[RMDB]
RNA sequence: GGGAACGACUCGAGUAGAGUCGAAAAGAAUCACCGUACCUAUUUAGGUUUACGCUCCAAGAUCGGUGGAUAGCAGCCCUAUCAAUAUCUAGGAGAACUGUGCUAUGGUUAGAAGAUUAGGUAGUCUAUUACACAGCCAUGUUCGCAUGGCUGUGAAUCUCGAUUAUUAGUUCGCUAAUAAUCGAGAAAAAGAAACAACAACAACAAC
Reactivity to 2A3 in 0.01 (KOAc 150mM, MgCl2 10mM, bicine 150mM(pH8.5), 24C), signal-to-noise 5, nucleotides 027 to 156: g040a030a060u100c020a010c030c010g030u050a030c010c010u060a170u180u220u270a050g010g010u040u040u050a030c040g020c020u020c010c000a040a000g010a050u060c020g010g050u030g020g070a030u050a030g070c060a010g010c020c020c000u040a060u090c030a060a060u030a020u180c030u030a020g000g020a030g030a030a040c040u060g030u060g050c040u050a030u110g050g020u060u030a040g020a160a020g010a150u110u050a040g060g010u010a040g030u020c030u040a090u060u100a060c000a000c000a000g010c010c000a000u000g020u010u020c030g000c110a000u000g000g000c000u000g000u000g000a000a000
Reactivity to DMS in 0.01 (KOAc 150mM, MgCl2 10mM, bicine 150mM(pH8.5), 24C), signal-to-noise 4, nucleotides 027 to 156: g010a090a080u000c010a160c030c000g020u000a060c010c010u000a170u000u010u010a030g030g000u000u010u000a050c040g000c020u000c030c020a090a110g010a050u000c080g010g030u000g030g000a070u000a070g010c080a180g020c090c090c000u000a160u010c040a070a140u000a100u000c060u000a140g000g000a080g020a090a090c090u010g010u000g010c050u000a050u000g010g010u000u000a080g010a070a090g000a100u000u000a060g010g020u000a090g020u000c030u000a080u010u000a210c010a010c010a010g020c000c000a010u000g000u000u000c300g010c020a010u000g020g000c010u000g010u000g010a020a070
Annotation:
The record gives the reactivity of an RNA of 207 nucleotides to 2A3 and DMS. For DMS, 11,360 sequencing reads were counted. DMS adducts were read by reverse transcription with MarathonRT.